[RMDB]
RNA sequence: GGGAACGACUCGAGUAGAGUCGAAAAUUACACCCUUCCCCGGCAGCGCCGGUGGCAGUGUUCAGCCCUUUUCCGGGCAAACUGCUGCCAGUCUGUCCUAGGCGCAACACAGGCAGCCCGUCGCCAUAACCCUUACUUAGUUCGCUAAGUAAGGGUUAAAAGAAACAACAACAACAAC
Reactivity to DMS in 0.01 (KOAc 150mM, MgCl2 10mM, bicine 150mM(pH8.5), 24C), signal-to-noise 5, nucleotides 027 to 126: u020u030a110c190a210c020c000c000u000u020c010c010c010c050g030g000c020a060g010c100g040c020c040g030g030u000g010g010c000a000g020u000g010u020u010c240a220g020c000c000c020u020u010u030u020c180c200g000g000g020c010a060a120a010c030u010g010c010u000g010c000c000a070g000u000c020u000g010u010c030c050u000a090g010g010c050g010c060a060a040c140a040c110a050g000g010c040a070g000c040c010c020g000u020c050g000c050c030a110u020
Reactivity to 2A3 in 0.01 (KOAc 150mM, MgCl2 10mM, bicine 150mM(pH8.5), 24C), signal-to-noise 4, nucleotides 027 to 126: u090u030a030c010a070c020c000c010u020u000c010c000c000c010g010g020c020a020g040c010g010c060c040g000g010u010g010g000c000a000g000u020g090u120u190c150a050g010c000c010c020u090u160u090u070c070c040g000g000g010c010a010a020a010c010u030g000c000u000g010c000c000a010g030u000c010u030g040u040c000c000u080a050g010g010c000g010c010a040a060c060a000c020a080g030g030c010a010g020c020c010c000g060u060c020g010c010c000a020u040